[RMDB]
RNA sequence: GGGAACGACUCGAGUAGAGUCGAAAACGCAAUCCGCCGGUUACGGUGGCGGCUGAUGGCAGUGCUGGCAAUAGCGGUUGGUACUUACGGUGUCUUGUCCGCUGUGACGACGUGGUUCGGUACGUUCAGGGAUCAGUUAAUUCGUUAACUGAUCCCUAAAAGAAACAACAACAACAAC
Reactivity to DMS in 0.01 (KOAc 150mM, MgCl2 10mM, bicine 150mM(pH8.5), 24C), signal-to-noise 6, nucleotides 027 to 126: c070g010c120a070a080u010c020c030g000c020c020g020g000u000u010a070c080g020g020u000g010g010c190g000g010c050u000g010a080u000g020g000c080a050g020u000g010c030u000g010g010c070a080a080u010a080g010c100g000g000u000u000g010g010u000a030c070u000u010a120c120g010g020u000g010u010c040u000u010g000u010c020c010g010c050u000g010u010g010a100c030g000a050c050g010u000g010g010u000u000c050g010g020u010a080c100g000u000u000c140
Reactivity to 2A3 in 0.01 (KOAc 150mM, MgCl2 10mM, bicine 150mM(pH8.5), 24C), signal-to-noise 6, nucleotides 027 to 126: c030g020c040a030a060u030c010c030g000c010c020g080g030u120u080a050c030g020g030u030g020g000c010g020g000c020u070g020a140u100g040g040c050a010g020u020g060c010u020g000g040c010a060a130u050a140g080c080g040g010u030u030g020g000u020a010c010u100u070a060c080g050g020u030g020u030c040u060u120g060u060c010c020g020c040u030g010u050g020a030c040g000a000c020g040u090g010g060u090u070c030g030g020u050a060c020g030u020u120c030
About this RNA: Source: RMDB library OK2TST, as collected in RNAgym. The record gives the reactivity of an RNA of 177 nucleotides to DMS and 2A3. Values cover nucleotides 27 to 126. The 2A3 profile rests on 8,943 reads.